RNA sequence: GGGAACGACUCGAGUAGAGUCGAAAAGAUAAUGUCUUCGGACAUUAUCCACGCCUAAAGGCUUUAAUUAAUUAGCUUAGCCUGCUAAUUAAAAUGGCAUUAACAACUGUCCAUUCGUGGACAGUAAGCCUUGUAUGGUAUUCGUACCAUACAAGGCAAAAGAAACAACAACAACAAC
Reactivity to DMS in 0.01 (KOAc 150mM, MgCl2 10mM, bicine 150mM(pH8.5), 24C), signal-to-noise 2, nucleotides 027 to 126: g000a010u000a000a020u000g000u000c000u000u020c190g030g010a020c010a000u010u010a000u000c000c020a120c290g000c010c000u000a070a090a090g000g010c000u010u000u010a060a150u000u000a000a020u000u000a000g000c000u000u000a220g020c170c170u000g000c000u000a010a010u000u000a020a000a090a070u000g000g010c020a180u010u010a030a090c220a090a060c000u000g000u000c010c000a030u000u010c210g000u000g010g010a000c000a000g020u000a020a100
Reactivity to 2A3 in 0.01 (KOAc 150mM, MgCl2 10mM, bicine 150mM(pH8.5), 24C), signal-to-noise 3, nucleotides 027 to 126: g000a000u000a010a000u010g000u010c010u020u070c240g060g000a000c000a000u000u000a000u000c000c010a030c050g050c000c010u100a200a100a030g090g000c010u170u070u050a080a070u050u020a010a010u000u010a040g010c010u050u030a030g060c010c040u010g020c000u010a010a020u030u030a020a050a010a060u090g020g020c030a050u100u160a100a060c060a040a000c010u010g010u000c010c000a020u010u060c170g100u030g000g000a020c000a000g010u000a000a020

Conditions: 150 mM KOAc, 10 mM MgCl2 and 150 mM bicine (pH 8.5), 24 C. The record gives the reactivity of an RNA of 177 nucleotides to DMS and 2A3. For DMS the reverse transcriptase was MarathonRT. For 2A3 the reverse transcriptase was SuperScript II with manganese. For DMS, 1,685 sequencing reads were counted. DMS (dimethyl sulfate) methylates the pairing face of unpaired adenines and cytosines.